Background:
The data come from the RNA Mapping Database (RMDB), library TTRDES. Chemical mapping of a 177-nucleotide RNA with 2A3 and DMS.

[RMDB]
RNA sequence: GGGAACGACUCGAGUAGAGUCGAAAAGAUAUGGAAGCUCAUGGAAUCUCCAACAGCCUUCAUCGGAAACGAUGAAGGACAUGGAGUGGCCAUAGCUUCCUAAGUCAAAAUCUGGCUUCGGCCAGAACCAUUUAUGAGCGUUCGCGCUCAUAAAUGGAAAAGAAACAACAACAACAAC
Reactivity to 2A3 in 0.01 (KOAc 150mM, MgCl2 10mM, bicine 150mM(pH8.5), 24C), signal-to-noise 1, nucleotides 027 to 126: g050a030u060a060u180g000g000a010a000g000c060u110c300a070u020g000g050a100a080u110c020u000c020c020a110a120c080a210g040c000c000u000u020c000a000u000c020g040g010a050a080a030c040g010a000u000g030a000a000g000g000a000c000a030u030g000g010a010g000u060g110g030c000c000a000u000a000g000c020u010u000c000c010u000a030a000g000u030c040a000a000a000a300u020c000u020g040g010c010u080u090c300g180g000c000c000a010g000a000a020
Reactivity to DMS in 0.01 (KOAc 150mM, MgCl2 10mM, bicine 150mM(pH8.5), 24C), signal-to-noise 2, nucleotides 027 to 126: g000a030u000a300u000g000g020a000a030g010c010u000c210a010u000g000g010a180a080u010c010u020c000c020a050a050c300a190g000c020c000u000u000c000a020u010c020g010g000a140a090a260c000g030a000u000g000a040a000g010g020a000c080a120u000g020g030a040g030u000g010g020c000c000a010u020a040g000c000u000u000c000c000u000a000a040g020u020c020a110a100a080a150u010c010u020g000g000c010u000u020c240g020g000c010c000a000g000a030a210
For DMS the reverse transcriptase was MarathonRT. For 2A3, 2,588 sequencing reads were counted.